[RMDB]
RNA sequence: GGGAACGACUCGAGUAGAGUCGAAAACAGACGGACGUACGUCUUAUGUUCACUUUGCUUAUGCCGAUAGUGCCGAUGGUCAAAAGGGUUUCAGUUUAACUCAGACUGGAAAUAAACGCUAUUUAGGUGUAUGCACCAACUUCAUCAAGGAAGAUAGCUUUGGAGGUACGUUCGCGUACCUCCAAAGAAAAGAAACAACAACAACAAC
Reactivity to 2A3 in 0.01 (KOAc 150mM, MgCl2 10mM, bicine 150mM(pH8.5), 24C), signal-to-noise 1, nucleotides 027 to 156: c000a000g020a000c000g080g020a030c060g080u160a010c020g060u060c000u140u100a040u090g030u110u130c060a080c130u140u020u030g060c020u100u110a020u020g080c040c080g020a040u030a030g020u010g090c010c000g090a080u090g000g180u200c090a050a050a050a050g000g000g020u000u000u040c010a040g020u040u070u120a210a040c020u020c100a000g000a010c000u030g000g020a010a010a010u090a020a040a000c010g000c000u000a010u000u030u180a030g020g000u000g000u040a020u000g060c000a050c000c000a050a060c000u080u000c060a200u080c060a060a160g000g030a030a060g060a130u240a130g000